[RMDB]
RNA sequence: GGGAACGACUCGAGUAGAGUCGAAAAACAGCCUCUCUGACACCGGCACGCAGGUGAGCGAUGCGACGCUGGUGGCGCGGCUGGGCAACGAGGGGCUGCCAGCUGCGGCUGCCCGGGCGGGCAGCGGCAUGUAUCAACCUUUCGAGGUUGAUACAUGAAAAGAAACAACAACAACAAC
Reactivity to 2A3 in 0.01 (KOAc 150mM, MgCl2 10mM, bicine 150mM(pH8.5), 24C), signal-to-noise 9, nucleotides 027 to 126: a010c000a000g010c000c000u020c010u000c020u050g050a050c010a030c070c000g010g000c030a040c080g010c010a020g040g150u160g170a040g040c040g080a080u180g100c080g100a080c060g040c010u050g060g110u060g080g000c030g010c040g070g060c040u080g020g070g020c050a050a030c050g010a010g000g010g000g010c000u000g010c000c000a040g010c030u110g050c030g140g000c010u010g000c020c020c000g040g260g040c250g010g020g000c000a000g010c000g020g010
Reactivity to DMS in 0.01 (KOAc 150mM, MgCl2 10mM, bicine 150mM(pH8.5), 24C), signal-to-noise 9, nucleotides 027 to 126: a210c020a020g000c010c000u000c010u000c010u000g010a300c250a100c000c000g010g010c010a140c010g020c010a060g010g010u010g000a070g020c020g010a150u010g010c140g010a100c070g020c010u000g000g020u020g010g010c030g010c070g010g010c020u000g000g010g000c040a100a140c210g000a020g000g010g000g010c020u000g000c010c020a110g010c120u010g010c020g010g010c000u000g010c010c000c000g020g010g020c170g000g010g010c000a010g010c000g000g010
This 177-nucleotide RNA was probed chemically with 2A3 and DMS. The reactions ran in a buffer of 150 mM KOAc, 10 mM MgCl2 and 150 mM bicine (pH 8.5), at 24 C. 2A3 adducts were read by reverse transcription with SuperScript II with manganese.